[RMDB]
RNA sequence: GGGAACGACUCGAGUAGAGUCGAAAAUAACCAGCUCCUCGCUGAUGAAGCAAUCAGGAAAUGGCUCGAGUUGAGCUAAGGAGAAUUUGGAUCCUUCCUUUGGUUCUCAGUAGGCAGGGUAGGGGCCACCCAUCGCACGAUUCGUCGUGCGAUGGGUAAAAGAAACAACAACAACAAC
Reactivity to DMS in 0.01 (KOAc 150mM, MgCl2 10mM, bicine 150mM(pH8.5), 24C), signal-to-noise 1, nucleotides 027 to 126: u000a070a220c040c020a240g000c030u000c020c000u000c100g020c010u010g030a030u000g020a050a010g000c080a090a010u000c150a020g030g000a040a070a150u000g000g000c000u010c000g010a250g040u000u010g030a040g040c000u010a050a150g000g000a030g010a090a070u010u040u020g010g010a300u000c050c000u000u010c010c010u060u030u000g000g000u000u000c020u000c020a030g000u000a070g050g050c150a020g020g020g030u020a080g010g010g010g000c070c070
Reactivity to 2A3 in 0.01 (KOAc 150mM, MgCl2 10mM, bicine 150mM(pH8.5), 24C), signal-to-noise 2, nucleotides 027 to 126: u030a000a070c010c010a020g030c010u010c000c000u030c070g010c000u000g010a050u210g000a080a010g150c050a020a020u120c050a050g010g000a040a110a150u190g060g000c020u030c050g290a300g150u140u290g110a000g000c010u010a040a050g050g020a060g100a120a090u300u210u210g100g120a080u040c010c000u020u000c030c000u080u050u090g060g000u180u040c030u000c010a070g010u110a080g140g000c060a060g090g050g020u120a030g000g000g000g050c000c000